[RMDB]
Structure probing data (DMS and 2A3) for a 177-nucleotide construct. For 2A3, 2,829 sequencing reads were counted. Conditions: 150 mM KOAc, 10 mM MgCl2 and 150 mM bicine (pH 8.5), 24 C.

RNA sequence: GGGAACGACUCGAGUAGAGUCGAAAACGAGAUGAGUUCGCUCAUCUCGAAAGAACCCCGGGCGUGACUCGGUCAGAGCAUGACAGGCGCUGCGGUCACGAAAAAGUGGUGUGUUCGCACACCACAACACUGUAUCGUCGUUCGCGACGAUACAGUGAAAAGAAACAACAACAACAAC
Reactivity to DMS in 0.01 (KOAc 150mM, MgCl2 10mM, bicine 150mM(pH8.5), 24C), signal-to-noise 2, nucleotides 027 to 126: c000g000a010g000a020u000g000a010g040u000u010c220g020c000u000c000a000u010c000u000c000g000a000a000a090g000a150a120c090c010c000c040g010g000g020c000g000u010g000a020c000u010c040g060g050u010c020a020g010a020g020c000a050u000g020a140c280a130g000g010c000g010c020u000g000c010g000g000u000c020a020c010g000a050a070a020a060a070g010u000g000g020u010g040u000g000u000u030c140g040c000a000c000a010c000c000a010c000a030a160
Reactivity to 2A3 in 0.01 (KOAc 150mM, MgCl2 10mM, bicine 150mM(pH8.5), 24C), signal-to-noise 2, nucleotides 027 to 126: c020g000a000g020a010u000g000a000g050u070u150c190g020c110u000c000a000u020c000u000c000g010a010a020a000g020a040a090c020c000c000c000g050g040g010c000g010u010g030a020c020u060c210g080g030u210c070a020g020a010g060c050a060u240g160a170c100a160g220g000c010g000c010u020g010c000g010g010u020c010a000c000g090a060a030a010a010a020g010u000g000g000u000g000u000g000u000u050c150g000c050a000c000a000c030c000a010c000a000a010